[RMDB]
RNA sequence: GGGAACGACUCGAGUAGAGUCGAAAACAGACUGCUGACAAAGUGCCCGCUACGGAGAGAACAGGCAGAUCGUAAAGACGCCGUUAAUACGUCCAUGUAGGCUCGUGCCGCGCCAUCCCUGGCGCGGGUACUCAAAAGCCUUCGGGCUUUUGAGUACAAAAGAAACAACAACAACAAC
Reactivity to DMS in 0.01 (KOAc 150mM, MgCl2 10mM, bicine 150mM(pH8.5), 24C), signal-to-noise 2, nucleotides 027 to 126: c060a100g030a110c090u000g000c020u000g020a120c080a130a040a210g030u020g010c000c010c000g000c030u010a080c100g040g000a110g000a130g000a040a080c090a080g000g030c010a030g000a050u000c020g000u000a080a190a100g020a080c010g000c020c090g010u000u020a050a100u050a140c080g010u000c010c010a070u000g000u000a040g010g010c030u030c000g020u010g000c020c010g140c080g000c020c000a070u030c020c080c090u030g000g010c020g020c000g000g020
Reactivity to 2A3 in 0.01 (KOAc 150mM, MgCl2 10mM, bicine 150mM(pH8.5), 24C), signal-to-noise 4, nucleotides 027 to 126: c030a010g130a110c040u070g050c010u070g070a100c060a090a090a040g070u020g050c010c010c010g000c020u080a070c080g060g000a040g000a000g020a140a020c050a140g010g000c050a030g030a160u070c060g090u170a040a120a140g020a010c040g040c020c010g030u020u050a080a020u110a170c020g050u020c040c010a010u100g030u060a030g030g000c010u010c050g060u100g030c000c000g000c000g000c000c000a140u140c030c000c020u020g020g000c000g000c000g000g010